[RMDB]
RNA sequence: GGGAACGACUCGAGUAGAGUCGAAAAGAACUUUGGGGUCCACCUCCCUCUUAGGUUGGUGGUGAUUUAGGCAUUAUUUUACUGAUGAGAAAAACAAGGCUCAGAGAGGUCAAAGUUGGCAAAACCAGUGUAUGGUGAACAUAAUGGAGUGGCAGAACAUAAUUAGCGCAUUCGUGCGCUAAUUAUGAAAAGAAACAACAACAACAAC
Reactivity to DMS in 0.01 (KOAc 150mM, MgCl2 10mM, bicine 150mM(pH8.5), 24C), signal-to-noise 1, nucleotides 027 to 156: g060a050a040c010u000u000u000g000g010g030g000u020c030c010a090c030c030u000c060c010c040u000c170u010u010a020g010g050u010u010g020g000u020g040g000u010g000a130u020u000u000a020g010g010c010a070u000u010a000u000u000u000u000a250c120u000g010a100u030g020a170g010a010a060a060a080a050c020a000a040g000g010c270u000c040a070g000a130g020a050g020g010u000c020a030a020a090g000u010u000g010g070c060a070a050a040a100c000c030a050g010u010g050u000a080u010g010g010u000g010a020a060c060a030u000a040a070u000g000g010a040g070u000g000g020c030a040g030a080a230
Reactivity to 2A3 in 0.01 (KOAc 150mM, MgCl2 10mM, bicine 150mM(pH8.5), 24C), signal-to-noise 2, nucleotides 027 to 156: g020a050a000c080u070u070u040g060g000g000g030u050c010c000a000c000c000u020c010c010c000u180c260u190u170a050g020g000u070u030g000g010u030g000g020u070g030a070u030u030u100a050g010g010c000a000u010u030a000u010u100u050u050a110c060u080g180a210u050g060a030g070a050a080a000a020a000c020a030a000g000g000c000u000c020a010g000a010g000a000g000g000u000c000a010a010a000g020u080u080g090g010c030a070a090a000a030c000c000a010g000u020g030u150a110u050g000g040u010g000a040a020c040a040u110a150a040u100g050g000a080g010u090g010g030c030a040g000a100a000
The record gives the reactivity of an RNA of 207 nucleotides to DMS and 2A3. For DMS, 2,070 sequencing reads were counted. 2A3 adducts were read by reverse transcription with SuperScript II with manganese. Source: RMDB library OK3TST, as collected in RNAgym. The 2A3 profile rests on 835 reads.